[RMDB]
RNA sequence: GGGAACGACUCGAGUAGAGUCGAAAACGUUCACUUCUCUGCCAUUCAGGGCGCUGGUUUCAAAACUCUGGCAGAAGGCCAGCAAGUUGAAUUCACCAUUGAAAAUGGUGCGAAAGGCCCAGCAGCUACUUGUAGAGAACUUCGGUUCUCUACAAGUAAAAGAAACAACAACAACAAC
Reactivity to DMS in 0.01 (KOAc 150mM, MgCl2 10mM, bicine 150mM(pH8.5), 24C), signal-to-noise 2, nucleotides 027 to 126: c120g020u010u000c040a090c080u000u000c060u000c030u000g000c030c030a090u000u000c170a120g020g040g010c060g020c030u000g020g020u010u010u000c070a060a080a050a170c040u000c010u000g010g000c020a200g010a100a110g000g020c000c000a000g010c140a080a030g000u000u000g000a030a060u000u010c020a010c000c000a030u000u000g010a100a080a060a040u000g000g000u020g000c120g000a040a110a080g020g000c070c000c010a140g020c080a110g010c290u020
Reactivity to 2A3 in 0.01 (KOAc 150mM, MgCl2 10mM, bicine 150mM(pH8.5), 24C), signal-to-noise 2, nucleotides 027 to 126: c020g020u040u030c040a050c070u090u010c030u000c010u050g000c000c000a090u110u100c090a150g000g070g000c040g020c040u010g000g050u000u160u090c050a060a080a030a040c030u040c000u050g010g000c030a060g070a300a020g230g000c000c000a020g000c040a040a030g000u060u020g040a010a020u060u030c000a000c010c000a010u000u070g130a070a080a000a010u040g010g000u020g030c030g050a140a070a030g050g000c000c000c050a030g050c010a000g030c000u000